[RMDB]
RNA sequence: GGGAACGACUCGAGUAGAGUCGAAAAUGCUGAGCUUUCGAGCUCAGCAGAGGCAAGCAAGCAGCGCAACGAGACAAGACGACCAUAAGAUCGAGCAUGCUACAAUACGGCACUUCGGUGCCGUAAACCUACGAAAGGGGUUCGCCCCUUUCGUAGGAAAAGAAACAACAACAACAAC
Reactivity to DMS in 0.01 (KOAc 150mM, MgCl2 10mM, bicine 150mM(pH8.5), 24C), signal-to-noise 2, nucleotides 027 to 126: u000g010c000u000g010a000g000c000u010u020u030c130g010a000g020c000u000c000a000g000c000a020g050a080g020g030c060a080a090g010c100a060a060g000c020a020g010c080g020c050a080a050c060g000a070g020a060c020a080a080g000a090c070g010a060c050c020a100u010a060a140g010a070u000c100g010a080g010c020a030u000g020c080u010a030c150a100a130u020a030c000g000g000c000a000c000u000u010c170g030g000u030g000c010c000g020u000a000a030a100